[RMDB]
RNA sequence: GGGAACGACUCGAGUAGAGUCGAAAAACAGUCAGUACGCUGACUGAGGGAAACGGGAGCCGGACUUGGGACAAGAGCCAUCCCAAGUCCAAGGCCAAGUAGGCUCUAGUGAUGGUACGCCAUCACAAAAACUGGUCUACCUUCGGGUAGACCAGAAUGAUCCUCCUGAUUUCGAUCAGGAGGAUCAAAAAGAAACAACAACAACAAC
Reactivity to 2A3 in 0.01 (KOAc 150mM, MgCl2 10mM, bicine 150mM(pH8.5), 24C), signal-to-noise 1, nucleotides 027 to 156: a000c000a000g000u000c000a000g010u070a040c210g060c150u020g000a000c000u000g010a000g020g040g030a060a100a060c110g000g060g060a060g020c060c050g020g000a000c000u000u000g000g000g000a020c040a100a190g000a010g010c000c000a010u000c000c000c000a000a000g000u000c000c000a040a030g000g030c030c000a020a070g080u110a100g020g000c010u000c000u030a090g000u000g010a010u010g000g020u030a060c260g070c070c000a000u000c000a000c010a000a070a000a010a010c020u000g000g000u000c010u000a010c000c000u070u050c150g110g000g000u020a000g000a000c000c000a000g000a000a000
Structure probing data (2A3) for a 207-nucleotide construct.
Conditions: 150 mM KOAc, 10 mM MgCl2 and 150 mM bicine (pH 8.5), 24 C.
It was measured as part of the RMDB library M2RFPK.
Values cover nucleotides 27 to 156.